The data come from the RNA Mapping Database (RMDB), library OK2TST. This 177-nucleotide RNA was probed chemically with DMS and 2A3. The 2A3 profile rests on 596 reads. For 2A3 the reverse transcriptase was SuperScript II with manganese.
RNA sequence: GGGAACGACUCGAGUAGAGUCGAAAAUAUGAGCACAACUUUUCUUUGAAACAAGAAGGUGAAUUAUCAAUGACAUUGAAUUUGACUUGUAUGAAAAAGGAUUUGAUAAAAGCCACUUUUCACGUAAGAUGAAGCUUACGUUCGCGUAAGCUUCAUCAAAAGAAACAACAACAACAAC
Reactivity to DMS in 0.01 (KOAc 150mM, MgCl2 10mM, bicine 150mM(pH8.5), 24C), signal-to-noise 1, nucleotides 027 to 126: u010a050u010g050a100g050c030a050c060a080a090c060u000u000u010u020c000u000u000u000g000a220a100a020c170a030a120g000a130a030g010g000u000g030a060a110u000u000a040u010c060a060a060u000g020a300c080a300u000u000g010a150a070u000u000u010g030a140c060u000u000g000u030a020u010g040a050a020a020a050a040g010g000a080u000u000u000g000a060u020a040a000a020a130g000c030c010a090c050u000u000u000u000c030a070c270g000u000a060a060
Reactivity to 2A3 in 0.01 (KOAc 150mM, MgCl2 10mM, bicine 150mM(pH8.5), 24C), signal-to-noise 1, nucleotides 027 to 126: u130a110u030g000a080g060c050a030c030a050a120c040u030u050u090u030c030u030u180u160g110a140a090a010c040a060a060g070a050a040g000g000u020g020a090a020u070u030a000u060c000a020a010u040g040a040c040a000u070u080g200a230a080u170u050u080g050a080c040u200u030g060u140a100u100g160a020a020a020a020a020g010g000a000u000u030u100g060a030u000a000a000a000a020g020c000c000a000c030u010u070u120u100c100a050c020g040u040a070a070